The data come from the RNA Mapping Database (RMDB), library RFM100. Chemical mapping of a 177-nucleotide RNA with DMS and 2A3. The reactions ran in a buffer of 150 mM KOAc, 10 mM MgCl2 and 150 mM bicine (pH 8.5), at 24 C. The DMS profile rests on 2,460 reads. 2A3 adducts were read by reverse transcription with SuperScript II with manganese.
[RMDB]
RNA sequence: GGGAACGACUCGAGUAGAGUCGAAAAGAAGAAGAAGACGAGCUCCCUUCGAUCCAAUCCAGGAGAGGAAGUGGUAGGAUGCAGCUGCCGGUUCAUGGAUACCUCUGCAGUGCAUGUCGUAGGCUUGCAAAUAGCGCGCAUUCGUGCGCGCUAUUUGAAAAGAAACAACAACAACAAC
Reactivity to DMS in 0.01 (KOAc 150mM, MgCl2 10mM, bicine 150mM(pH8.5), 24C), signal-to-noise 2, nucleotides 027 to 126: g030a060a140g020a090a100g000a090a100g010a110c040g070a090g000c060u000c020c000c030u000u010c040g000a180u000c000c030a070a090u030c120c050a090g040g010a020g000a150g020g000a050a030g010u000g030g020u040a090g000g000a040u000g060c000a040g000c000u000g020c020c300g000g000u000u010c030a200u080g040g000a120u020a060c030c020u000c150u040g040c060a030g000u000g020c030a030u030g000u000c020g000u010a050g000g000c020u000u020g010
Reactivity to 2A3 in 0.01 (KOAc 150mM, MgCl2 10mM, bicine 150mM(pH8.5), 24C), signal-to-noise 2, nucleotides 027 to 126: g120a070a010g010a050a000g030a070a030g020a030c070g010a020g010c010u000c000c000c000u010u010c030g090a040u000c000c030a000a070u010c010c040a020g060g010a080g020a040g130g010a020a030g040u090g110g020u020a050g020g000a030u020g020c020a070g040c010u000g000c050c000g010g010u070u120c200a130u230g170g000a070u120a060c000c010u050c050u050g000c000a000g010u000g020c030a010u000g020u020c000g000u030a070g040g030c100u050u060g000